This 177-nucleotide RNA was probed chemically with DMS. The RNA was probed in 150 mM KOAc, 10 mM MgCl2 and 150 mM bicine (pH 8.5) at 24 C.
RNA sequence: GGGAACGACUCGAGUAGAGUCGAAAAUUUAACGAAUAGUGUAGGGGAGAGUAAGAAGCCAUCCCAUCAGUUAGUAAGUAGGGUAAGGGCCUACUUAGACGAAGACGGGUACGGGGAAUUAUCGUUUUGGGAUUAAAGCAUUCGUGCUUUAAUCCCAAAAAGAAACAACAACAACAAC
Reactivity to DMS in 0.01 (KOAc 150mM, MgCl2 10mM, bicine 150mM(pH8.5), 24C), signal-to-noise 1, nucleotides 027 to 126: u020u010u030a050a080c050g000a100a050u000a060g050u000g000u000a030g010g000g020g000a000g000a160g000u000a040a070g000a120a070g010c060c090a120u000c010c030c020a050u050c060a070g000u020u000a100g000u000a000a000g050u000a000g000g000g070u000a070a210g000g020g000c000c000u020a010c000u000u010a030g000a010c070g010a090a130g000a020c080g000g000g000u000a040c080g090g000g000g000a110a090u090u040a090u000c090g020u000u000u000

DMS adducts were read by reverse transcription with MarathonRT.